RNA sequence: GGGAACGACUCGAGUAGAGUCGAAAAGGCGCGAGAACAGGCCCAUAUAGGCGCACUCUUCCAGCACUACGGCAUUAUGCACCGCAUCGGCGGCGUUUUUACCCCAGGCGAACGGGCCGUGAGAAUGCAACACUUCCUGGUUCGCCAGGAAGUGUUGAAAAGAAACAACAACAACAAC
Reactivity to 2A3 in 0.01 (KOAc 150mM, MgCl2 10mM, bicine 150mM(pH8.5), 24C), signal-to-noise 1, nucleotides 027 to 126: g030g000c010g000c030g090a090g000a070a060c070a090g000g050c000c010c010a050u210a000u040a130g090g000c000g000c040a050c040u050c020u010u050c010c030a030g000c040a040c060u150a040c030g000g020c010a030u050u060a060u260g000c040a020c050c040g060c010a110u180c050g150g000c000g040g000c010g040u000u030u030u030u220a110c000c000c000c000a010g040g040c000g030a070a020c020g010g070g040c010c000g020u000g000a040g030a050a080u210g020
Reactivity to DMS in 0.01 (KOAc 150mM, MgCl2 10mM, bicine 150mM(pH8.5), 24C), signal-to-noise 3, nucleotides 027 to 126: g000g020c040g010c030g000a040g000a110a090c100a110g020g020c020c030c010a070u010a110u010a080g000g000c030g040c030a100c080u000c080u010u010c040c040a130g020c070a090c110u000a060c080g000g020c030a090u010u010a040u010g000c040a050c060c010g020c020a090u010c120g000g020c010g000g000c040g000u010u000u000u010u020a130c050c020c040c020a070g010g010c030g000a050a070c070g010g000g050c020c040g010u010g000a140g000a100a100u020g010
This 177-nucleotide RNA was probed chemically with 2A3 and DMS.
Values cover nucleotides 27 to 126.
DMS (dimethyl sulfate) methylates the pairing face of unpaired adenines and cytosines.
DMS adducts were read by reverse transcription with MarathonRT.
Conditions: 150 mM KOAc, 10 mM MgCl2 and 150 mM bicine (pH 8.5), 24 C.
For DMS, 2,001 sequencing reads were counted.
The data come from the RNA Mapping Database (RMDB), library OK2TST.